[RMDB]
RNA sequence: GGGAACGACUCGAGUAGAGUCGAAAAAGCGUAGCGGUACGCCGCUACGGAAGGCGCAUUUGAACUGUAUUGUACGCCUUGCAUAAAGCAAAAGUACUAAAAAAACGUGCCGUUACGACGGCACGAAAAAACAUCCAUUGGUUCGCCAAUGGAUGAACAAUUAUAUAACCUUCGGGUUAUAUAAUUGAAAAGAAACAACAACAACAAC
Reactivity to 2A3 in 0.01 (KOAc 150mM, MgCl2 10mM, bicine 150mM(pH8.5), 24C), signal-to-noise 8, nucleotides 027 to 156: a000g120c010g000u000a000g000c000g010g000u030a040c190g050c020c000g000c000u000a000c000g000g000a010a010g010g000c020g010c050a080u070u070u270g120a170a090c110u090g050u190a100u180u080g020u030a020c010g010c000c010u000u030g000c010a070u110a230a120a040g020c020a020a020a020a030g040u040a040c070u150a040a060a030a030a030a010a050c010g000u000g000c000c000g000u010u030a060c270g000a010c000g050g000c000a000c010g000a010a000a000a000a000a010c000a000u000c000c000a000u000u000g010g010u030u040c090g040c070c000a000a000u000g000g000a000u000g000a000a000
Reactivity to DMS in 0.01 (KOAc 150mM, MgCl2 10mM, bicine 150mM(pH8.5), 24C), signal-to-noise 3, nucleotides 027 to 156: a100g020c030g010u000a020g000c020g010g010u000a080c210g050c020c010g010c030u000a010c010g010g010a060a020g010g010c000g030c020a090u000u020u010g020a060a230c150u000g020u010a260u010u000g010u000a020c020g000c020c010u000u000g000c040a140u000a060a080a190g010c050a060a100a090a130g020u000a130c080u000a010a010a060a080a040a060a170c010g040u000g000c000c010g020u000u000a080c180g020a110c000g020g030c010a000c000g010a000a010a020a120a030a070c010a010u000c000c000a010u010u000g000g010u000u010c300g020c000c000a000a010u000g000g010a000u000g020a030a120